[RMDB]
RNA sequence: GGGAACGACUCGAGUAGAGUCGAAAAGGUACCGUACACUAGAGCUAGUCAUGUACAUGGUACGCACGAUCCGAUCUCGUACUCGUACUAUGAUCACCAUGCAUGGGUACUCUAGAGACUCUAGGCGACCCGUUAUGACCUUCGGGUCAUAACGGGUAAAAGAAACAACAACAACAAC
Reactivity to DMS in 0.01 (KOAc 150mM, MgCl2 10mM, bicine 150mM(pH8.5), 24C), signal-to-noise 1, nucleotides 027 to 126: g000g020u010a100c040c070g020u030a150c200a140c040u000a050g000a060g000c300u000a000g000u010c010a030u000g000u060a040c010a020u000g010g000u000a020c010g030c300a040c000g030a090u000c060c130g000a150u000c040u000c020g020u000a100c010u010c050g000u000a030c010u000a010u010g000a290u000c200a060c070c220a300u000g030c010a000u000g050g000g060u000a000c000u020c010u000a010g000a130g030a060c080u010c080u000a020g000g000c160g000
Reactivity to 2A3 in 0.01 (KOAc 150mM, MgCl2 10mM, bicine 150mM(pH8.5), 24C), signal-to-noise 1, nucleotides 027 to 126: g040g010u060a020c020c050g040u080a040c060a050c040u070a030g010a060g040c040u060a010g300u070c000a000u010g000u010a090c000a020u020g010g010u010a010c060g010c050a050c010g020a050u000c130c160g080a180u060c020u000c040g000u110a080c000u000c010g000u020a000c000u000a030u040g060a140u140c010a010c250c010a020u070g000c010a010u000g030g000g050u010a010c000u010c000u010a000g010a000g030a070c050u010c020u090a060g060g030c010g060
Background:
The data come from the RNA Mapping Database (RMDB), library OK2TRN. Structure probing data (DMS and 2A3) for a 177-nucleotide construct. The reactions ran in a buffer of 150 mM KOAc, 10 mM MgCl2 and 150 mM bicine (pH 8.5), at 24 C. For DMS the reverse transcriptase was MarathonRT. The DMS profile rests on 678 reads.